[RMDB]
RNA sequence: GGGAACGACUCGAGUAGAGUCGAAAAUAGCUCAUGAUCGAUCACAUGGAUCCAUCAGGUACUGUGACUCACUAGAUACAUGACCAUGAGGUACUAGUCUCAUGCGUACGAUCAUCAUGCUAGUAGAGAUUUCAAUCAUCUUCGGAUGAUUGAAAUCAAAAGAAACAACAACAACAAC
Reactivity to 2A3 in 0.01 (KOAc 150mM, MgCl2 10mM, bicine 150mM(pH8.5), 24C), signal-to-noise 6, nucleotides 027 to 126: u050a010g010c010u020c050a010u020g010a010u020c040g000a020u020c010a010c010a090u050g060g000a030u000c030c010a160u140c070a040g070g010u060a080c060u110g090u100g160a080c020u020c060a050c070u060a040g010a050u060a050c020a040u080g040a020c020c020a070u030g030a020g040g030u100a140c090u090a120g110u020c010u010c020a000u010g010c030g040u050a080c020g020a030u020c000a010u030c010a020u170g020c010u000a000g040u100a030g040a000
Reactivity to DMS in 0.01 (KOAc 150mM, MgCl2 10mM, bicine 150mM(pH8.5), 24C), signal-to-noise 6, nucleotides 027 to 126: u000a030g000c020u000c300a030u010g000a010u000c030g010a210u000c020a160c050a010u010g000g000a060u000c040c060a090u010c110a060g000g020u000a060c070u010g000u000g010a070c070u000c120a060c130u000a050g010a100u010a080c100a040u000g000a060c060c010a040u000g000a080g010g000u000a100c170u000a100g010u000c010u000c010a010u000g020c070g010u000a150c060g000a010u000c010a010u000c130a030u010g000c020u000a010g010u010a110g020a170
Conditions: 150 mM KOAc, 10 mM MgCl2 and 150 mM bicine (pH 8.5), 24 C.
The record gives the reactivity of an RNA of 177 nucleotides to 2A3 and DMS.
For DMS the reverse transcriptase was MarathonRT.
As a SHAPE reagent, 2A3 marks flexible, mostly unpaired nucleotides at the ribose 2'-OH.
Source: RMDB library OK2TRN, as collected in RNAgym.